[RMDB]
RNA sequence: GGGAACGACUCGAGUAGAGUCGAAAAUAACCUUCCGGGACUCCCUCUCGAGAUCCUCUAACUUCUUUCUUCCGUUCACCCACUGCUCGAGGAUCUCUUCUCUUCCAUCGCGUUUCUUCUUCGACUCGGAACGGCUCAUCUCGACGAGAGGCGGCGUCAAAUAUAGACCGUUCGCGGUCUAUAUUUGAAAAGAAACAACAACAACAAC
Reactivity to 2A3 in 0.01 (KOAc 150mM, MgCl2 10mM, bicine 150mM(pH8.5), 24C), signal-to-noise 1, nucleotides 027 to 156: u080a080a030c030c040u080u070c080c050g100g000g090a120c040u030c000c030c000u030c030u020c000g020a030g000a030u010c030c030u010c060u060a060a130c040u170u140c020u080u300u000c030u220u050c040c080g030u070u100c060a100c050c000c010a100c160u130g050c050u080c100g010a010g030g000a040u030c020u020c050u100u040c020u020c000u040u000c070c010a160u110c030g040c020g110u080u060u060c040u060u010c000u010u050c050g030a040c020u000c010g010g020a040a030c010g010g010c010u000c010a130u030c010u020c050g090a060c040g000a000g030a030g100g000c000g000g030c020g040u020